[RMDB]
RNA sequence: GGGAACGACUCGAGUAGAGUCGAAAACCGGCGGGCCACAUCCUCCCUGUGCUGAAAGCCUUCCCCUUACAGGGGCGGUAUCAGCAGCCAAAGAAUGCCAGCGCGGCUUCUUCGGUUCACAGACUAGGCGAGUGAUGGGCUGAGCCCUUAGGGGUCUCAGAACUUAAUACUUCGGUAUUAAGUUCUGAAAAGAAACAACAACAACAAC
Reactivity to 2A3 in 0.01 (KOAc 150mM, MgCl2 10mM, bicine 150mM(pH8.5), 24C), signal-to-noise 2, nucleotides 027 to 156: c010c000g040g060c070g020g020g010c020c010a110c000a060u010c000c000u010c010c000c000u030g020u030g000c010u010g030a040a100a110g060c020c020u130u130c030c000c000c000u090u230a080c090a130g020g000g010g050c000g010g000u020a030u030c000a000g000c000a000g000c000c010a000a000a000g010a030a000u290g000c010c000a120g070c220g060c160g110g010c000u000u000c000u000u000c010g000g000u040u040c080a080c020a130g060a030c050u110a040g010g050c130g090a000g030u250g030a000u000g010g000g030c000u000g020a010g010c000c000c020u010u160a060g030g010g000g080u000c020u000

Source: RMDB library RSTRND, as collected in RNAgym.
The record gives the reactivity of an RNA of 207 nucleotides to 2A3.
The RNA was probed in 150 mM KOAc, 10 mM MgCl2 and 150 mM bicine (pH 8.5) at 24 C.